[RMDB]
Structure probing data (DMS and 2A3) for a 177-nucleotide construct.
DMS adducts were read by reverse transcription with MarathonRT.
The RNA was probed in 150 mM KOAc, 10 mM MgCl2 and 150 mM bicine (pH 8.5) at 24 C.
The data come from the RNA Mapping Database (RMDB), library OK1LIB.
RNA sequence: GGGAACGACUCGAGUAGAGUCGAAAAUGGUGAUGCGCCGACGCUGACGGCCAGCUCGGGCCCGCGUUCAGGUCCCGAGUUCGGGUGAAAGGCUGGCCCGCAGUGCAGAUUCGGCGGUCCGUCGGGGAACUAUCGGCCAUUUCGAUGGCCGAUAGUUAAAAGAAACAACAACAACAAC
Reactivity to DMS in 0.01 (KOAc 150mM, MgCl2 10mM, bicine 150mM(pH8.5), 24C), signal-to-noise 1, nucleotides 027 to 126: u050g020g010u010g030a000u020g000c000g020c010c000g030a010c020g030c080u000g040a040c130g000g060c000c030a070g000c000u020c020g030g000g010c000c000c030g010c050g000u000u010c030a060g010g000u070c000c020c000g010a140g000u030u030c050g000g000g020u040g010a070a060a060g000g030c000u000g000g000c000c020c060g020c100a030g000u000g000c160a190g000a110u010u000c030g000g000c000g000g000u000c000c010g000u000c080g000g010g000g010
Reactivity to 2A3 in 0.01 (KOAc 150mM, MgCl2 10mM, bicine 150mM(pH8.5), 24C), signal-to-noise 2, nucleotides 027 to 126: u170g090g010u180g010a090u170g100c010g040c000c020g000a010c010g010c000u010g000a170c000g010g000c000c000a010g020c010u020c080g060g080g000c000c030c000g010c020g010u050u060c030a020g070g190u030c040c000c030g030a070g120u040u080c040g000g000g020u030g110a200a030a000g040g010c000u010g000g000c010c000c000g020c040a000g000u050g020c060a000g030a300u040u090c010g000g000c010g010g000u030c000c010g080u080c020g000g000g000g020